This 207-nucleotide RNA was probed chemically with 2A3 and DMS. Values cover nucleotides 27 to 156.
[RMDB]
RNA sequence: GGGAACGACUCGAGUAGAGUCGAAAACGCUGGGCCAUAGCGAUGUAGGGAAUACAUGGACGUUGAAACUCUGAAGCGCGCACGGAGUGGAGUCCAUUGAUUCCCGCAGAUAUCGCUAUGGCCUGUGCUGAAGCGCGCACGGCAACCGAAAGGUGCGGUUAUCAAUCUACUUCGGUAGAUUGAUAACAAAAGAAACAACAACAACAAC
Reactivity to 2A3 in 0.01 (KOAc 150mM, MgCl2 10mM, bicine 150mM(pH8.5), 24C), signal-to-noise 2, nucleotides 027 to 156: c020g000c010u030g000g000g010c000c000a010u010a010g000c000g000a010u010g020u030a140g030g010g000a020a000u080a120c020a010u000g010g000a000c010g170u300u010g000a000a000a000c000u000c010u020g060a270a070g020c010g000c010g000c020a010c020g010g000a000g000u000g000g020a010g000u020c000c000a010u010u100g010a000u000u010c000c000c000g000c010a000g000a010u010a000u010c000g000c000u000a000u020g000g010c000c000u000g000u000g000c000u010g020a110a030g010c000g000c000g010c000a000c010g030g000c010a020a010c000c010g040a070a020a040g010g000u030g010c030g030
Reactivity to DMS in 0.01 (KOAc 150mM, MgCl2 10mM, bicine 150mM(pH8.5), 24C), signal-to-noise 1, nucleotides 027 to 156: c100g040c010u000g030g000g000c000c020a060u000a030g000c010g000a040u000g000u000a040g050g080g020a020a040u000a040c060a070u000g000g040a070c000g000u000u000g020a300a220a020c000u000c010u000g010a070a030g020c060g040c000g070c030a300c030g010g010a050g050u000g020g000a070g010u000c000c000a020u000u000g010a070u000u000c000c020c000g030c120a070g030a020u000a010u000c010g000c000u000a010u000g050g000c000c020u010g010u000g000c000u000g010a040a050g030c020g020c040g000c000a290c000g010g030c020a100a150c000c000g020a140a100a220g000g010u000g000c020g010